[RMDB]
This 207-nucleotide RNA was probed chemically with 2A3 and DMS.
2A3 adducts were read by reverse transcription with SuperScript II with manganese.
RNA sequence: GGGAACGACUCGAGUAGAGUCGAAAAAAAUUCAAUCCAGGCAAAAUCCUGUCUGCAAUCUGCAACUUGGGUAUAGACUGUUGGAAUCGCUUUCGCAAGUGGUUCUUUGGUCUCAACUUUGAUGCACAUAUGUGGGCGGUGGAUGCCUUCAUUCCACCGUAUUACCCAGAUUCGUCUGGGUAAUACGAAAAGAAACAACAACAACAAC
Reactivity to 2A3 in 0.01 (KOAc 150mM, MgCl2 10mM, bicine 150mM(pH8.5), 24C), signal-to-noise 4, nucleotides 027 to 156: a000a000a000u150u060c040a030a050u060c040c050a010g000g000c010a020a000a020a080u030c010c030u170g010u010c010u000g000c000a010a030u010c010u050g000c010a030a060c020u030u040g070g000g040u130a100u100a050g000a000c020u050g160u280u110g050g020a000a000u000c000g000c020u030u110u180c180g030c140a010a000g000u000g000g020u000u000c000u040u030u260g000g000u000c000u000c010a020a070c010u020u020u040g030a050u040g020c070a000c000a010u280a150u100g010u020g010g000g010c010g000g020u020g020g020a000u020g000c010c000u030u040c030a070u050u030c020c010a030c040
Reactivity to DMS in 0.01 (KOAc 150mM, MgCl2 10mM, bicine 150mM(pH8.5), 24C), signal-to-noise 2, nucleotides 027 to 156: a080a020a140u000u010c060a060a080u020c050c060a030g020g000c040a050a080a180a150u000c070c010u020g030u000c030u000g000c020a090a060u000c030u010g010c030a040a060c030u000u010g020g000g010u000a180u010a030g000a040c030u010g020u000u010g020g000a060a010u010c020g030c010u000u010u000c220g000c300a040a020g030u000g030g040u000u000c010u000u000u000g020g050u000c030u000c040a140a090c010u000u010u000g000a130u010g000c010a030c030a050u000a040u010g020u000g000g010g010c010g000g020u000g000g010a260u000g000c020c010u010u010c040a110u000u000c010c010a180c130